Overview
Structure probing data (2A3) for a 207-nucleotide construct. Source: RMDB library OK3TST, as collected in RNAgym. Reactivities are given for positions 27 through 156.
[RMDB]
RNA sequence: GGGAACGACUCGAGUAGAGUCGAAAAUGACGAGGCAUGGGGACUUGGUCUGGGAUGUAAUGGUGUUAUUGAGUUAUUUGUUGAGCCAUUAGACGCAAGCUGGGAUUAUCCACUCGCCACAGUAGCCGAUAAUGACCCAGUAACCGUCCUCACUGUCCUAGCGAGUGAGGUUCGCCUCACUCGCUAGAAAAGAAACAACAACAACAAC
Reactivity to 2A3 in 0.01 (KOAc 150mM, MgCl2 10mM, bicine 150mM(pH8.5), 24C), signal-to-noise 1, nucleotides 027 to 156: u230g100a020c130g020a020g000g000c030a020u080g000g000g000g000a000c060u100u150g100g040u080c000u000g000g000g060a060u120g110u270a050a130u140g020g040u030g040u120u090a080u060u090g060a170g140u060u000a150u260u080u120g140u030u170g010a060g040c000c000a050u020u060a080g050a020c040g050c080a020a110g010c040u020g000g000g000a070u210u000a020u230c020c000a020c050u080c050g050c030c000a160c020a000g000u030a000g000c030c080g010a010u010a050a060u190g100a100c000c000c000a000g000u000a050a000c000c000g000u000c000c000u000c020a010c120u000g000u000c000

Background: For 2A3 the reverse transcriptase was SuperScript II with manganese.